Conditions: 150 mM KOAc, 10 mM MgCl2 and 150 mM bicine (pH 8.5), 24 C. Chemical mapping of a 207-nucleotide RNA with DMS and 2A3.
RNA sequence: GGGAACGACUCGAGUAGAGUCGAAAAACAUCUCACUGGGAAGUGAGAUGUGAGUCCGCAUGGGAAUGCGGACGGUCGAUUUGACAAAGGUCCUAAUUGUCAAGAGGAGAACGAGAUGUACGGGAGUAGAUCGAGUUCUGCUCGCAGAAUAGGCAGCGUGUUCACGUGUAUUCGUACACGUGAGCACAAAAGAAACAACAACAACAAC
Reactivity to DMS in 0.01 (KOAc 150mM, MgCl2 10mM, bicine 150mM(pH8.5), 24C), signal-to-noise 1, nucleotides 027 to 156: a000c000a010u000c000u000c000a030c000u020g020g010g010a300a020g040u020g000a010g030a010u000g020u010g020a100g040u020c000c010g000c010a020u010g030g040g000a270a060u000g000c000g020g000a000c000g000g000u000c070g000a300u010u020u000g020a300c030a050a300a190g000g010u000c010c030u000a030a050u010u000g000u010c040a000a110g020a040g000g030a070g010a010a020c030g000a300g000a050u000g000u000a060c000g000g000g010a230g020u000a060g000a000u000c010g020a300g030u000u000c020u000g020c020u010c000g000c080a110g010a040a140u000a040g010g000c020a080g020c180
Reactivity to 2A3 in 0.01 (KOAc 150mM, MgCl2 10mM, bicine 150mM(pH8.5), 24C), signal-to-noise 3, nucleotides 027 to 156: a000c000a000u010c000u010c000a000c000u020g040g060g060a080a000g020u000g000a000g000a000u000g000u000g000a010g000u000c000c000g000c010a020u040g050g020g090a080a060u130g000c000g000g000a000c000g000g000u040c040g040a240u040u000u220g010a010c000a000a030a000g000g000u020c000c010u010a040a050u030u020g010u020c030a030a020g000a000g030g040a000g000a000a000c020g000a000g000a060u020g020u260a010c030g030g140g050a120g030u020a020g010a060u010c000g000a010g020u000u000c000u000g010c000u000c010g000c020a030g060a150a080u120a130g030g040c040a030g040c050
DMS adducts were read by reverse transcription with MarathonRT.